[RMDB]
RNA sequence: GGGAACGACUCGAGUAGAGUCGAAAAGAGAUAUCAGUGGAAAGGGAGACGAGUAACAAAAGUUUUGCGACCUGGAACAGUUGUAGUUUUUUCACCAGGUCAAAAGUCAGCAAUGCGAGGAACAAAACGAUCUGUUGAUGAAAUUAUGGCUGACUCGCCAUACCAUCCAGUUCGCUGGAUGGUAUGGAAAAGAAACAACAACAACAAC
Reactivity to 2A3 in 0.01 (KOAc 150mM, MgCl2 10mM, bicine 150mM(pH8.5), 24C), signal-to-noise 4, nucleotides 027 to 156: g020a000g000a010u020a020u160c030a020g040u020g030g030a060a050a040g010g010g010a030g020a020c060g010a020g040u080a070a020c080a080a080a020a040g000u020u040u070u120g050c060g010a010c010c040u020g030g010a040a040c040a060g000u040u060g040u080a080g030u050u050u000u020u080u080c030a060c020c010a010g000g000u020c000a010a010a000a010g000u010c010a000g010c050a060a050u130g030c050g050a020g030g050a100a050c080a040a130a050a020c050g020a050u010c010u100g020u030u030g020a040u040g050a050a020a000u130u080a060u120g020g000c010u000g000a030c010u010c000g000
Reactivity to DMS in 0.01 (KOAc 150mM, MgCl2 10mM, bicine 150mM(pH8.5), 24C), signal-to-noise 2, nucleotides 027 to 156: g000a150g010a090u000a040u000c070a080g020u020g010g010a090a080a060g010g020g010a110g010a090c050g000a080g030u000a100a160c070a030a070a060a180g000u000u010u000u000g010c110g010a030c020c000u000g010g010a100a160c070a070g000u010u000g040u000a100g010u010u000u000u000u000u000c060a130c040c010a010g010g020u000c010a020a040a020a050g000u000c000a030g040c000a060a080u020g120c050g000a150g020g000a080a130c050a030a060a010a090c100g000a050u000c040u000g000u000u000g000a090u000g000a080a090a100u000u000a040u000g010g020c000u000g000a020c010u000c070g010